[RMDB]
RNA sequence: GGGAACGACUCGAGUAGAGUCGAAAAAGCAUGUUAGGUUCGCAUGGUGCACUAUUGUGUUAUUAGUAACUAAGUAAGCUUACAAUCGAAAAUGUUUAACCAUAAAAGGGUAGAAUGGUGUAAGACAGAUACCCUCUGAGCUUCGGCUCAGAGGGAACAAUCAAAAAACGUUCGCGUUUUUUGAUUGAAAAGAAACAACAACAACAAC
Reactivity to DMS in 0.01 (KOAc 150mM, MgCl2 10mM, bicine 150mM(pH8.5), 24C), signal-to-noise 2, nucleotides 027 to 156: a070g020c040a020u020g040u000u000a120g040g020u000u010c050g020c050a080u000g060g040u010g030c070a030c030u010a070u000u020g030u010g010u000u000a090u020u020a110g030u000a030a100c010u000a040a200g010u000a070a080g010c030u010u000a040c030a120a150u000c050g000a070a050a120a030u000g030u000u010u000a070a120c020c000a060u010a040a050a090a150g000g000g010u000a090g020a050a040u000g000g020u000g010u000a050a090g020a090c060a140g000a120u010a120c020c000c000u000c000u000g010a010g020c010u000u010c300g000g000c000u000c000a000g010a000g010g010g010a000a010
Reactivity to 2A3 in 0.01 (KOAc 150mM, MgCl2 10mM, bicine 150mM(pH8.5), 24C), signal-to-noise 2, nucleotides 027 to 156: a000g060c040a030u060g020u050u040a020g010g030u050u100c020g010c070a040u020g050g070u070g030c020a000c070u140a110u160u160g010u020g000u040u020a080u020u040a070g050u020a040a010c020u000a080a000g060u000a120a000g100c030u020u060a060c060a040a030u080c070g040a100a050a020a010u010g030u010u040u040a040a010c000c000a010u100a070a200a040a010g020g000g010u040a010g040a030a000u000g000g000u030g010u060a040a010g000a020c010a010g080a030u090a080c000c000c000u000c000u000g000a000g010c000u030u160c270g020g020c000u000c000a000g000a000g000g000g000a010a000